Chemical mapping of a 170-nucleotide RNA with 2A3 and DMS.
[RMDB]
RNA sequence: GGGAACGACUCGAGUAGAGUCGAAAAUGGAGCCAUGGGAUGCUCCUCCCGAUUCCGUCCAUCCCCCCCCCCAGGAGGUCCCCCCAGGAAUGGCGGGACCCCACUCUGCAGGGUCCGCGUUCCAUUCGACGUAAGCUGUUCGCAGCUUACAAAAGAAACAACAACAACAAC
Reactivity to 2A3 in 0.01 (KOAc 150mM, MgCl2 10mM, bicine 150mM(pH8.5), 24C), signal-to-noise 4, nucleotides 027 to 129: u220g020g000a010g030c040c060a140u080g040g000g010a020u070g000c000u000c000c000u000c020c000c010g000a020u090u050c040c050g020u050c030c010a100u040c010c020c000c000c000c000c000c010c000c000a010g020g030a040g010g060u010c000c000c000c000c000c000a030g030g050a030a020u040g160g120c020g000g000g000a000c000c000c000c000a040c030u180c070u130g020c070a050g000g000g000u010c000c000g050c030g030u070u040c000c020a060u050u050c020g000a030c030
Reactivity to DMS in 0.01 (KOAc 150mM, MgCl2 10mM, bicine 150mM(pH8.5), 24C), signal-to-noise 6, nucleotides 027 to 129: u000g000g000a010g030c070c090a000u040g000g010g010a140u030g000c050u020c030c010u010c000c000c010g000a150u050u030c100c000g000u020c010c010a040u050c070c020c020c000c020c010c000c000c000c010a080g000g020a070g000g000u030c030c030c010c030c060c050a090g020g020a070a040u030g010g040c100g040g000g010a020c000c010c000c020a040c130u030c050u080g080c100a120g000g010g040u040c020c010g040c040g050u050u050c020c010a070u020u010c000g010a210c150